The record gives the reactivity of an RNA of 177 nucleotides to DMS and 2A3. Reactivities are given for positions 27 through 126. The RNA was probed in 150 mM KOAc, 10 mM MgCl2 and 150 mM bicine (pH 8.5) at 24 C. For 2A3 the reverse transcriptase was SuperScript II with manganese. It was measured as part of the RMDB library OK1LIB. The DMS profile rests on 2,632 reads.
[RMDB]
RNA sequence: GGGAACGACUCGAGUAGAGUCGAAAAGAAAAUAAAAUCGUCAGAUUUCGGUGUUGGGCGAGAAAGACGUAUGAACCUCCCACAAUACCAGUGUUCAAUGCCAGGUAUCUCCGCAAUACUGAACGGCACUCCGCUUGAUAUUCGUAUCAAGCGGAGUAAAAGAAACAACAACAACAAC
Reactivity to DMS in 0.01 (KOAc 150mM, MgCl2 10mM, bicine 150mM(pH8.5), 24C), signal-to-noise 2, nucleotides 027 to 126: g030a090a030a030a090u010a060a100a030a060u030c020g000u000c120a010g000a170u000u000u010c000g000g060u050g010u010u010g000g000g010c060g000a060g000a030a120a110g000a020c100g040u010a060u000g000a040a030c040c010u000c000c000c010a050c130a040a060u000a050c070c070a080g000u010g050u000u000c030a090a090u000g010c000c020a070g020g000u000a010u000c040u050c050c050g010c060a040a030u010a050c040u000g000a030a100c080g000g000c070
Reactivity to 2A3 in 0.01 (KOAc 150mM, MgCl2 10mM, bicine 150mM(pH8.5), 24C), signal-to-noise 2, nucleotides 027 to 126: g010a010a010a000a000u110a040a120a020a090u100c000g010u050c000a040g000a060u000u010u040c040g000g010u110g010u040u060g050g000g040c100g030a020g010a060a010a000g070a010c080g140u110a080u140g070a070a040c010c010u020c020c000c000a020c020a020a010u100a000c000c020a050g100u080g010u180u150c030a080a000u120g020c010c000a020g010g080u030a080u000c070u000c000c000g060c070a000a000u010a100c030u020g060a100a090c070g030g000c020